Conditions: 150 mM KOAc, 10 mM MgCl2 and 150 mM bicine (pH 8.5), 24 C. The record gives the reactivity of an RNA of 177 nucleotides to 2A3 and DMS. 2A3 adducts were read by reverse transcription with SuperScript II with manganese.
[RMDB]
RNA sequence: GGGAACGACUCGAGUAGAGUCGAAAAGGGAUCUUGAGAGGAUUUUGUCGUAGGUUUGCGGAGGGUGGCGGGGUAUCAAUUAUCGAUGUGAGCAAUGAUCGAAAAGUUACGUAUGUUCUUCAUAGAGAGUGUAGUUUUAAUUCGUUAAAACUACACUAAAAGAAACAACAACAACAAC
Reactivity to 2A3 in 0.01 (KOAc 150mM, MgCl2 10mM, bicine 150mM(pH8.5), 24C), signal-to-noise 9, nucleotides 027 to 126: g030g000g000a020u030c030u090u130g050a090g020a030g130g030a090u060u070u080u200g060u070c050g040u080a060g050g120u090u120u160g060c040g010g040a070g050g020g010u140g030g020c170g000g010g000g000u030a030u070c030a050a080u160u050a060u100c040g010a010u020g030u060g070a020g050c040a090a090u160g020a030u070c010g020a050a060a020a050g070u070u030a020c030g040u050a120u130g020u040u000c000u040u050c050a070u110a050g050a000g010
Reactivity to DMS in 0.01 (KOAc 150mM, MgCl2 10mM, bicine 150mM(pH8.5), 24C), signal-to-noise 6, nucleotides 027 to 126: g000g010g000a050u010c090u020u000g000a110g020a130g010g000a080u010u020u020u010g000u010c070g010u010a080g000g010u010u020u010g020c110g020g010a120g000g000g020u020g000g000c120g020g000g000g020u000a020u010c030a020a060u020u020a120u000c030g020a060u010g020u030g020a120g010c120a050a060u020g000a040u000c030g010a050a070a050a120g000u010u000a060c150g010u000a060u010g000u010u010c060u000u000c080a110u020a120g000a150g020